[RMDB]
RNA sequence: GGGAACGACUCGAGUAGAGUCGAAAAGGAUAUAACUUCGGUUAUAUCCAAAGAAACUGGAAGGCGCGGCGAGCUGCACCCGCAGUGAAUCAAAUGCAGCAAAAACUCGAAGCUUCGGCUUCGAGAACUUAAAUGGGAUGUUCGCAUCCCAUUUAAGAAAAGAAACAACAACAACAAC
Reactivity to DMS in 0.01 (KOAc 150mM, MgCl2 10mM, bicine 150mM(pH8.5), 24C), signal-to-noise 1, nucleotides 027 to 126: g000g000a030u000a010u000a000a000c000u000u000c130g030g010u000u020a020u010a010u000c000c000a030a050a120g000a030a220a090c080u010g000g000a060a090g000g000c090g030c060g020g010c080g020a090g010c010u000g000c000a030c190c010c030g030c050a120g020u040g000a080a090u000c110a030a060a140u000g000c040a010g020c010a140a060a060a080a060c000u000c010g010a010a020g020c000u000u010c170g060g020c000u010u010c000g000a000g010a000a060